[RMDB]
RNA sequence: GGGAACGACUCGAGUAGAGUCGAAAACUGCUUGGAUUAGUCUAUAUAAAGCUUUUCAAGCUUUUAUUCUUUUUAUGACAUUUUGUAAAAUCUCUUGAUAACCAAAUUAUACAUCGAGCUUACGGUGAUUUAGGCGUAGUUUCGACUACGCCUAAAUAAAAGAAACAACAACAACAAC
Reactivity to DMS in 0.01 (KOAc 150mM, MgCl2 10mM, bicine 150mM(pH8.5), 24C), signal-to-noise 2, nucleotides 027 to 126: c000u010g020c020u000u010g010g000a010u000u000a000g020u030c000u000a120u030a190u020a150a080a150g010c020u000u010u010u000c020a000a030g000c000u000u020u030u020a020u000u000c020u000u000u000u020u010a030u000g020a140c120a080u000u010u090u010g000u010a050a080a050a080u030c060u000c080u030u010g010a030u020a040a260c150c050a000a070a120u020u000a060u020a080c010a020u000c030g000a130g000c210u030u010a080c000g000g030u000g000
Reactivity to 2A3 in 0.01 (KOAc 150mM, MgCl2 10mM, bicine 150mM(pH8.5), 24C), signal-to-noise 3, nucleotides 027 to 126: c000u010g020c000u000u010g020g030a010u030u070a060g050u100c030u060a100u000a040u080a140a300a060g000c000u040u020u000u010c000a000a000g000c040u060u060u030u080a080u040u030c000u010u060u010u010u040a090u140g030a010c010a070u000u060u120u100g030u040a060a110a090a170u010c080u020c080u210u260g030a050u080a070a040c060c000a050a110a080u060u110a040u020a080c010a010u010c040g030a000g170c080u190u110a070c030g030g000u020g010
Record summary: Chemical mapping of a 177-nucleotide RNA with DMS and 2A3. The RNA was probed in 150 mM KOAc, 10 mM MgCl2 and 150 mM bicine (pH 8.5) at 24 C. Source: RMDB library OK1LIB, as collected in RNAgym. DMS adducts were read by reverse transcription with MarathonRT. For DMS, 2,294 sequencing reads were counted. Values cover nucleotides 27 to 126.